Chemical mapping of a 177-nucleotide RNA with DMS and 2A3.
The data come from the RNA Mapping Database (RMDB), library OK2TST.
DMS adducts were read by reverse transcription with MarathonRT.
For 2A3, 1,251 sequencing reads were counted.
RNA sequence: GGGAACGACUCGAGUAGAGUCGAAAAAUGGACAGGCUGGGCACGAUGCUGAACCUGUUGCUCACCGCAUAGGUCAUGCCCAGGCCGAAGUAGCCGGCGUUGGCGUCGCUGCCGCUGACGGUCUGCACGCUCCGACUAAUUUCGAUUAGUCGGAGCGAAAAGAAACAACAACAACAAC
Reactivity to DMS in 0.01 (KOAc 150mM, MgCl2 10mM, bicine 150mM(pH8.5), 24C), signal-to-noise 2, nucleotides 027 to 126: a040u000g010g020a090c080a270g010g010c030u000g010g000g010c000a040c100g020a060u000g030c070u010g000a130a060c000c010u000g020u000u000g020c020u000c220a140c280c230g010c010a050u010a020g010g020u000c080a050u010g000c000c020c040a080g000g010c010c020g000a030a100g010u020a050g010c030c030g000g010c040g010u000u000g030g000c010g010u020c090g000c200u010g010c060c000g010c040u010g000a140c040g000g010u000c020u000g000c060a180
Reactivity to 2A3 in 0.01 (KOAc 150mM, MgCl2 10mM, bicine 150mM(pH8.5), 24C), signal-to-noise 1, nucleotides 027 to 126: a000u090g020g020a050c050a050g010g040c000u070g030g000g000c000a010c050g110a060u130g080c040u010g060a080a040c000c010u020g120u020u120g000c020u080c120a140c040c070g000c030a020u040a030g010g000u020c000a030u160g010c030c000c010a050g060g040c010c000g010a040a020g010u010a030g000c000c030g030g000c120g020u050u130g030g000c010g030u040c020g010c260u170g010c020c000g030c060u090g020a040c000g030g070u000c020u030g060c010a010
The reactions ran in a buffer of 150 mM KOAc, 10 mM MgCl2 and 150 mM bicine (pH 8.5), at 24 C. 2A3 adducts were read by reverse transcription with SuperScript II with manganese.